Overview
The record gives the reactivity of an RNA of 177 nucleotides to DMS. Values cover nucleotides 27 to 126. Conditions: 150 mM KOAc, 10 mM MgCl2 and 150 mM bicine (pH 8.5), 24 C. The DMS profile rests on 1,254 reads. Values are in units of 0.01, from 0 to 300, in steps of 10.
[RMDB]
RNA sequence: GGGAACGACUCGAGUAGAGUCGAAAAUUUGAUAAAUGGGCCGCCCUACCAUAUAACUCUCUAAAGAGGCCAAUUGCAGCGCCCAUUGUUUUAAAUCAUGGCCGUUCGAUUGGUAUAACGAUACAUAUAAUAAAUCAGUGUUCGCACUGAUUUAUUAAAAAGAAACAACAACAACAAC
Reactivity to DMS in 0.01 (KOAc 150mM, MgCl2 10mM, bicine 150mM(pH8.5), 24C), signal-to-noise 2, nucleotides 027 to 126: u010u020u000g000a170u000a050a090a060u000g010g000g040c080c090g000c010c010c000u010a150c060c030a030u000a100u020a150a120c010u000c000u010c140u000a070a060a150g020a050g040g000c010c040a010a020u010u010g000c160a050g020c030g040c300c000c000a010u020u000g020u000u000u010u000a110a160a090u010c040a020u000g000g010c190c000g010u000u000c040g000a040u000u000g000g010u000a070u010a060a080c130g000a170u010a130c080a060u020a110